[RMDB]
RNA sequence: GGGAACGACUCGAGUAGAGUCGAAAAUAUCGGAACUCCCCUUCUUGGGAGAAGAGAGCCCCAUUGUAUGCCUCGAUUUCGCGGAGGAUCUGCCGGGUUUCGGGCGAGAGUGCGUCCUCUCUCUCCCCGUUCCACACCAUUUCGAUGGUGUGGAACGAAAAGAAACAACAACAACAAC
Reactivity to 2A3 in 0.01 (KOAc 150mM, MgCl2 10mM, bicine 150mM(pH8.5), 24C), signal-to-noise 1, nucleotides 027 to 126: u120a030u110c050g100g060a020a040c020u030c020c010c010c020u190u000c050u030u090g010g030g020a000g030a230a000g010a000g000a000g020c000c000c010c100a050u070u070g130u050a100u210g000c000c020u090c050g080a090u080u110u020c220g050c020g050g050a020g090g080a140u040c080u210g060c000c030g070g000g050u020u050u050c000g000g000g000c020g000a040g000a000g000u050g020c050g000u010c000c000u000c000u000c000u050c000u020c000c000c000
Reactivity to DMS in 0.01 (KOAc 150mM, MgCl2 10mM, bicine 150mM(pH8.5), 24C), signal-to-noise 1, nucleotides 027 to 126: u010a120u000c150g010g000a110a100c090u030c050c000c000c300u010u000c080u000u020g030g000g010a050g010a010a070g030a070g000a000g010c300c000c030c040a050u000u000g010u010a150u000g030c010c010u000c050g000a050u000u000u020c060g030c020g010g000a040g020g000a110u020c130u010g000c000c040g000g000g000u000u000u000c010g010g010g000c020g000a070g000a040g020u020g010c220g020u010c120c020u010c010u010c030u000c010u010c000c000c000